[RMDB]
RNA sequence: GGGAACGACUCGAGUAGAGUCGAAAAGAAUUGGUAUGUAAGCUACGUCUUCCGGUAGCUGCGUCACACUUUAAGAGUGUGCAUACUGAGCCGAAGCUCAGCUUCGGUCCCCCAAGGGAAGACCAAACCGAUGAUGAGGAUUCGUCCUCAUCAUCGGAAAAGAAACAACAACAACAAC
Reactivity to 2A3 in 0.01 (KOAc 150mM, MgCl2 10mM, bicine 150mM(pH8.5), 24C), signal-to-noise 6, nucleotides 027 to 126: g140a020a100u020u020g010g000u000a000u000g000u000a000a020g000c000u000a000c000g070u030c000u010u010c000c000g000g010u000a000g000c000u000g000c000g000u010c000a000c000a000c000u060u140u290a300a110g230a010g260u000g010u000g020c000a000u000a000c000u010g010a000g000c000c010g000a010a000g000c020u070c300a040g010c000u030u010c000g000g000u010c000c000c000c000c010a020a010g080g000g000a000a000g000a000c020c070a050a040a040
Reactivity to DMS in 0.01 (KOAc 150mM, MgCl2 10mM, bicine 150mM(pH8.5), 24C), signal-to-noise 2, nucleotides 027 to 126: g010a020a070u070u000g000g020u010a000u000g010u000a300a160g000c010u000a000c020g000u020c000u000u000c000c010g000g020u000a000g000c010u020g000c000g000u010c000a020c000a010c000u000u020u080a060a140g020a030g030u010g000u000g000c000a000u010a020c000u000g000a030g000c000c000g030a000a000g040c030u060c110a080g010c000u020u000c000g000g000u000c000c000c000c030c060a090a020g000g020g050a020a020g040a140c300c070a010a060a070